[RMDB]
RNA sequence: GGGAACGACUCGAGUAGAGUCGAAAAAGAGAGCACAGUGGAAAUGACAUUUCGUCAAGGCACAGGUUCCAGCGCGAACGAAGAGGUACCGCCGACUUUUCACAUGGCCUCUGUGUAGAGACGAAUCUCAUUAGCAGGCGUUCGCGCCUGCUAAUGAAAAAGAAACAACAACAACAAC
Reactivity to 2A3 in 0.01 (KOAc 150mM, MgCl2 10mM, bicine 150mM(pH8.5), 24C), signal-to-noise 3, nucleotides 027 to 126: a000g060a000g000a020g000c040a010c040a070g050u050g030g060a050a090a150u080g010a060c060a110u100u140u110c080g020u030c020a110a140g090g000c040a020c060a140g050g000u000u090c000c030a020g060c030g000c030g090a080a000c010g040a080a050g050a030g050g030u070a080c010c010g040c000c000g020a110c110u060u030u030u040c040a060c050a110u020g060g000c010c010u030c020u000g010u000g000u020a080g000a020g020a070c040g020a030a060u060c030
Reactivity to DMS in 0.01 (KOAc 150mM, MgCl2 10mM, bicine 150mM(pH8.5), 24C), signal-to-noise 3, nucleotides 027 to 126: a030g010a070g000a090g020c010a030c020a090g030u030g000g000a040a070a060u010g000a070c090a170u030u020u020c100g000u020c020a110a120g000g000c030a120c140a120g030g000u000u010c030c020a130g020c150g010c070g030a070a070c070g020a080a020g010a110g010g000u000a080c070c030g000c010c020g000a120c120u000u000u000u000c000a060c030a060u010g010g000c070c020u000c010u010g010u000g000u020a050g000a170g000a020c050g010a100a110u060c100

Chemical mapping of a 177-nucleotide RNA with 2A3 and DMS. The RNA was probed in 150 mM KOAc, 10 mM MgCl2 and 150 mM bicine (pH 8.5) at 24 C. 2A3 is a SHAPE reagent: it acylates the 2'-hydroxyl of flexible nucleotides of all four kinds. It was measured as part of the RMDB library OK1LIB.